An RNA of 177 nucleotides, treated with 2A3 and DMS and read out base by base. For 2A3 the reverse transcriptase was SuperScript II with manganese. High DMS reactivity at an A or C suggests that its Watson-Crick edge is free. Conditions: 150 mM KOAc, 10 mM MgCl2 and 150 mM bicine (pH 8.5), 24 C. For 2A3, 1,119 sequencing reads were counted.
[RMDB]
RNA sequence: GGGAACGACUCGAGUAGAGUCGAAAAAGUUAUUGUCACCCAAUGCCGCUCCAGUUAAAAAAAGAUAUUCUCGGCAUGUGCCAAGGGCAGUCAACCACGUUAUCUGCCGUGGGUAAACUCGAUGCGCGUAACGAGUAGGUUUCGACCUACUCGUUACAAAAGAAACAACAACAACAAC
Reactivity to 2A3 in 0.01 (KOAc 150mM, MgCl2 10mM, bicine 150mM(pH8.5), 24C), signal-to-noise 1, nucleotides 027 to 126: a010g090u100u050a130u180u220g110u110c070a120c010c010c000a050a090u060g020c060c010g010c000u000c050c000a080g030u090u110a010a120a070a090a050a070a000g070a060u130a090u100u030c040u030c010g020g000c110a060u170g090u100g010c010c000a040a040g000g020g000c000a020g020u010c030a040a060c000c030a070c090g040u050u130a100u060c020u030g110c020c020g020u020g030g000g000u080a040a060a060c030u040c070g080a040u140g080c080g000c010
Reactivity to DMS in 0.01 (KOAc 150mM, MgCl2 10mM, bicine 150mM(pH8.5), 24C), signal-to-noise 2, nucleotides 027 to 126: a070g010u000u000a060u000u010g000u000c080a170c010c050c010a110a070u000g020c060c050g010c060u000c030c060a090g020u010u000a010a020a030a090a030a110a040g010a090u000a080u000u000c050u000c040g030g020c030a070u000g000u000g020c030c040a060a090g020g000g020c040a010g010u010c090a060a110c040c020a040c060g000u010u000a080u000c090u020g040c120c020g020u000g000g000g010u000a020a080a060c040u020c080g000a030u000g010c050g020c200
For DMS the reverse transcriptase was MarathonRT.